[RMDB]
Source information
Source: RMDB library TTRINS, as collected in RNAgym. This 177-nucleotide RNA was probed chemically with DMS. Reactivities are given for positions 27 through 126. For DMS the reverse transcriptase was MarathonRT. The reactions ran in a buffer of 150 mM KOAc, 10 mM MgCl2 and 150 mM bicine (pH 8.5), at 24 C.

RNA sequence: GGGAACGACUCGAGUAGAGUCGAAAAGAUAUGGAUAGAAUAUCCGUGUCCGUGGUAGCAUCGAUCUACUACUCGGAAACGAGUAGGUAGGGAGCUAUCCACGGACACGGAUAUUCUAUCCUAAGUCCUCCCUUGUAUUGUUCGCAAUACAAGGGAGAAAAGAAACAACAACAACAAC
Reactivity to DMS in 0.01 (KOAc 150mM, MgCl2 10mM, bicine 150mM(pH8.5), 24C), signal-to-noise 1, nucleotides 027 to 126: g020a110u000a270u000g020g010a000u020a010g000a040a030u000a000u000c000c010g010u000g000u000c000c010g020u000g010g050u010a010g000c000a300u000c240g000a050u000c010u010a040c000u000a010c000u010c020g000g000a130a090a250c020g010a000g020u000a000g030g000u000a000g000g010g010a000g000c000u000a010u010c000c000a000c000g030g020a000c010a000c000g000g020a010u000a010u000u000c000u000a010u010c000c000u000a000a140g010u010c060